This 177-nucleotide RNA was probed chemically with 2A3 and DMS.
RNA sequence: GGGAACGACUCGAGUAGAGUCGAAAAGAUAUGGACAGAACAAAUCGAGUCACUACCCACCUCGGAAACGAGAGGUGACCCGAUUUAGCUCUGUCCUAAGUCAAAGUCGACACUUCGGUGUCGACAAGUAGGUCUAUUUCUUCGGAAAUAGACCUACAAAAGAAACAACAACAACAAC
Reactivity to 2A3 in 0.01 (KOAc 150mM, MgCl2 10mM, bicine 150mM(pH8.5), 24C), signal-to-noise 2, nucleotides 027 to 126: g010a020u090a050u180g000g000a000c020a010g010a040a010c000a010a040a000u010c000g000a000g030u000c010a010c010u100a100c050c090c040a030c000c010u030c010g000g050a130a110a080c010g010a000g010a000g030g020u000g000a000c000c010c000g000a000u000u000u050a030g000c010u000c000u000g010u010c020c000u000a070a010g020u010c060a130a000a100g000u000c010g000a010c000a000c000u040u140c300g200g000u000g020u000c000g000a000c000a000a000
Reactivity to DMS in 0.01 (KOAc 150mM, MgCl2 10mM, bicine 150mM(pH8.5), 24C), signal-to-noise 2, nucleotides 027 to 126: g000a030u010a300u030g020g000a010c000a010g010a030a030c010a030a020a000u000c000g000a060g000u000c000a000c020u000a050c080c060c110a300c120c000u000c000g030g020a080a070a160c010g000a020g010a120g010g000u010g000a010c000c010c000g000a010u000u000u000a030g020c060u000c000u000g000u000c000c000u000a000a080g000u000c060a060a090a130g010u010c000g010a000c000a020c000u010u020c160g030g040u000g010u000c000g000a020c010a000a050
The 2A3 profile rests on 6,137 reads. Conditions: 150 mM KOAc, 10 mM MgCl2 and 150 mM bicine (pH 8.5), 24 C.